[RMDB]
RNA sequence: GGGAACGACUCGAGUAGAGUCGAAAAUGACGGCAGGCGCGCCACCGAGCGCCUUCAGGCCCUGGAACCGCGCCCGAUCCCUGUUGACCGCAAGACGGCAAUGGAACGUCUGGCAUCGGCCCUGCCAGUGACCACUAGUAUUCGUACUAGUGGUCACAAAAGAAACAACAACAACAAC
Reactivity to DMS in 0.01 (KOAc 150mM, MgCl2 10mM, bicine 150mM(pH8.5), 24C), signal-to-noise 3, nucleotides 027 to 126: u000g000a060c120g030g060c050a060g000g010c130g020c060g000c090c100a180c140c100g000a090g010c100g030c010c040u000u000c120a140g020g030c050c020c030u010g010g000a080a100c300c030g000c200g010c010c030c040g010a110u010c100c020c050u010g000u010u000g000a120c020c010g000c080a090a070g010a200c030g010g000c020a070a060u000g010g000a080a080c120g000u010c010u000g000g000c010a070u000c050g000g010c050c010c030u000g000c050c030a110
Reactivity to 2A3 in 0.01 (KOAc 150mM, MgCl2 10mM, bicine 150mM(pH8.5), 24C), signal-to-noise 1, nucleotides 027 to 126: u110g050a020c080g040g070c030a020g000g040c020g000c030g040c050c000a030c090c000g100a050g020c020g010c000c060u040u060c030a010g000g000c020c000c010u000g030g050a030a030c020c000g030c010g010c020c040c000g050a050u050c020c020c000u030g030u130u110g110a300c010c000g010c110a110a040g090a150c010g000g050c020a010a080u050g030g020a170a030c030g030u040c020u010g040g000c000a030u100c010g000g010c000c000c010u010g020c000c000a020
The record gives the reactivity of an RNA of 177 nucleotides to DMS and 2A3. 2A3 adducts were read by reverse transcription with SuperScript II with manganese. The data come from the RNA Mapping Database (RMDB), library OK2TST. The 2A3 profile rests on 1,805 reads.